[RMDB]
RNA sequence: GGGAACGACUCGAGUAGAGUCGAAAAUCGUGCUACCUGCUGGCGUUCCUGGGGGGCUCGGCUGUUGCCUGGGUAGUCGUCACUCUGUCGAUCAAGCGCGCCAGCCGUGAUGAGGGUGCUGCGGAGGCUGUUGCGUAUACUUCGGUAUACGCAACAGAAAAGAAACAACAACAACAAC
Reactivity to 2A3 in 0.01 (KOAc 150mM, MgCl2 10mM, bicine 150mM(pH8.5), 24C), signal-to-noise 1, nucleotides 027 to 126: u090c020g000u050g010c020u090a150c030c000u050g030c050u030g020g010c000g000u000u000c020c000u020g020g000g000g000g030g030c020u010c020g040g000c010u010g070u090u100g010c020c010u040g000g020g050u110a020g030u010c000g020u000c000a040c040u110c030u070g070u050c000g000a050u120c040a040a000g060c050g030c020g000c070c000a000g000c010c000g070u030g020a100u080g040a080g050g000g070u050g090c010u050g000c040g030g010a040g010g020
Reactivity to DMS in 0.01 (KOAc 150mM, MgCl2 10mM, bicine 150mM(pH8.5), 24C), signal-to-noise 3, nucleotides 027 to 126: u010c080g030u040g010c000u000a070c020c030u000g010c110u000g000g010c030g010u000u010c030c020u000g020g000g010g010g010g000c040u010c030g030g010c020u010g010u000u000g010c010c020u010g020g010g030u010a100g020u000c030g010u000c040a090c110u010c150u010g010u000c030g010a050u010c080a080a090g000c150g000c050g010c120c010a050g010c030c080g030u000g000a100u010g010a080g000g000g010u010g020c050u000g000c080g010g010a120g010g000
Chemical mapping of a 177-nucleotide RNA with 2A3 and DMS. Conditions: 150 mM KOAc, 10 mM MgCl2 and 150 mM bicine (pH 8.5), 24 C. The DMS profile rests on 3,605 reads. 2A3 adducts were read by reverse transcription with SuperScript II with manganese. Source: RMDB library OK2TST, as collected in RNAgym.